[RMDB]
RNA sequence: GGGAACGACUCGAGUAGAGUCGAAAAGAUAUGGAUACUCAACUUCGAUAAGGGUCCAUCGGAAACGAUGGAACCCUUUUGACGAAGGUCGGUAUCCUAAGUCAAAAGGUUAGCUUCGGCUAACCAAGCAUUGCUGAUACUUCGGUAUCAGCAAUGCAAAAGAAACAACAACAACAAC
Reactivity to DMS in 0.01 (KOAc 150mM, MgCl2 10mM, bicine 150mM(pH8.5), 24C), signal-to-noise 1, nucleotides 027 to 126: g030a040u030a300u020g010g000a060u000a010c000u000c080a300a250c030u000u000c060g040a150u000a010a020g050g000g000u010c000c010a000u020c000g010g020a070a080a100c000g000a020u000g000g010a040a020c000c000c000u040u040u000u000g030a200c300g030a000a000g000g000u000c300g010g000u000a020u030c020c000u010a010a080g000u000c010a070a100a130a100g080g000u000u000a000g030c000u000u020c280g000g010c000u000a000a000c000c040a050a110
Conditions: 150 mM KOAc, 10 mM MgCl2 and 150 mM bicine (pH 8.5), 24 C.
This 177-nucleotide RNA was probed chemically with DMS.
DMS adducts were read by reverse transcription with MarathonRT.
Source: RMDB library TTRDES, as collected in RNAgym.